[RMDB]
RNA sequence: GGGAACGACUCGAGUAGAGUCGAAAAGGUGUACUUGAGAAAUCACUUGCGGAAGUCUCUUAUACAGACUUGAAAGGUAACGAUAAGAAAAUUACCGUGGCAGGUACGAAGAUUGACGAAACAAAACAGGACUUUGUCGUAGACUUUAACCAGUCUCGCAGCAUAGAAUAUUCGUAUUCUAUGCUGCAAAAGAAACAACAACAACAAC
Reactivity to DMS in 0.01 (KOAc 150mM, MgCl2 10mM, bicine 150mM(pH8.5), 24C), signal-to-noise 3, nucleotides 027 to 156: g010g070u000g020u010a040c040u010u000g000a150g030a090a090a070u000c050a030c060u010u010g020c040g040g010a100a300g020u010c030u000c020u000u010a190u050a090c140a060g010a070c030u010u000g010a080a080a130g000g010u000a030a080c010g040a080u000a090a130g010a090a060a130a070u000u000a000c040c020g010u020g010g020c030a080g000g030u000a030c030g000a060a080g010a150u000u000g020a090c050g000a120a040a180c090a050a020a050a130c050a130g020g000a180c090u000u000u000g020u000c040g050u010a050g000a060c010u000u000u010a070a120c120c100a040g010u000c020u000c090
Reactivity to 2A3 in 0.01 (KOAc 150mM, MgCl2 10mM, bicine 150mM(pH8.5), 24C), signal-to-noise 6, nucleotides 027 to 156: g020g010u020g010u040a050c040u070u090g020a050g070a120a140a040u110c040a030c050u050u070g010c020g040g040a010a010g030u000c010u000c000u070u040a110u030a150c050a030g030a030c000u040u090g070a140a100a050g000g020u030a050a020c060g020a120u060a210a080g080a070a110a040a040u060u010a020c010c000g000u020g100g010c070a060g020g020u030a050c040g020a030a020g050a080u040u200g030a030c020g040a090a080a000c040a060a060a040a020c050a050g080g030a030c030u060u050u080g050u040c040g030u060a020g010a030c000u060u040u030a050a050c040c010a020g010u020c020u030c090